[RMDB]
RNA sequence: GGGAACGACUCGAGUAGAGUCGAAAAAGAAUAUUCGUAUUCUAAAAAAGCGUACUACUCGUAACGCGACGAUCCCAAGGAACUACUUCAGUCCCAAAUAGGACUGAAGCCUUGGGAUUAGCGUGCGAGUAUCGCCCGGUUUCUCGUUCGCGAGAAAGAAUGGUUCAUAUUUCGAUAUGAACCAUUCAAAAGAAACAACAACAACAAC
Reactivity to DMS in 0.01 (KOAc 150mM, MgCl2 10mM, bicine 150mM(pH8.5), 24C), signal-to-noise 3, nucleotides 027 to 156: a060g010a090a030u000a040u000u000c200g030u000a020u000u000c010u020a000a050a070a080a080a070g020c030g020u020a090c120u000a010c010u000c010g010u000a070a040c030g020c000g020a140c100g000a040u000c000c000c000a030a080g000g010a150a150c080u000a300c000u000u000c000a010g000u000c010c010c030a020a170a220u000a050g000g000a050c000u000g000a010a010g000c000c010u000u000g000g020g020a000u000u000a040g040c000g040u000g030c000g000a020g020u000a000u000c030g020c020c010c050g020g000u000u000u000c000u000c010g030u000u000c170g040c040g000a040g000a060a100a140
Reactivity to 2A3 in 0.01 (KOAc 150mM, MgCl2 10mM, bicine 150mM(pH8.5), 24C), signal-to-noise 7, nucleotides 027 to 156: a000g020a030a000u040a030u060u120c110g020u050a040u010u080c110u260a090a120a060a080a070a020g050c050g050u090a110c080u010a000c000u030c000g010u070a300a140c010g010c020g040a090c190g020a020u000c000c010c000a000a000g010g000a060a060c090u170a030c000u300u000c000a000g000u020c020c020c020a180a300a210u250a160g000g000a000c000u000g000a000a000g000c000c000u000u000g000g000g000a000u000u000a000g000c000g000u000g000c000g000a000g000u000a000u030c000g000c000c020c000g140g040u020u060u000c010u000c010g050u070u110c260g000c030g070a020g010a020a030a000